Annotation: Structure probing data (DMS) for a 177-nucleotide construct. The reactions ran in a buffer of 150 mM KOAc, 10 mM MgCl2 and 150 mM bicine (pH 8.5), at 24 C.

RNA sequence: GGGAACGACUCGAGUAGAGUCGAAAAAUGCAGAAAAUGAAGAACUUGCUGGCGGCGCUGGGCUGCCAGUUUGAUCUGCAUAGUCUGGCAGGAUCGCUGGAUGUCGCCGAUCGCCAAAUGGUGGAAAGUCAUGCUAGGAUUUCGAUCCUAGCAUGACAAAAGAAACAACAACAACAAC
Reactivity to DMS in 0.01 (KOAc 150mM, MgCl2 10mM, bicine 150mM(pH8.5), 24C), signal-to-noise 1, nucleotides 027 to 126: a050u000g000c010a010g020a030a040a050a050u010g000a130a040g020a030a100c030u000u010g030c020u000g010g030c000g030g000c000g000c290u040g020g000g010c000u000g000c010c000a010g010u000u000u000g000a060u010c010u000g020c000a010u010a070g010u000c000u050g030g000c020a060g070g030a150u000c020g000c050u000g030g000a040u010g010u010c030g030c090c000g010a040u020c030g000c020c060a050a110a080u010g010g030u000g000g000a060a140a150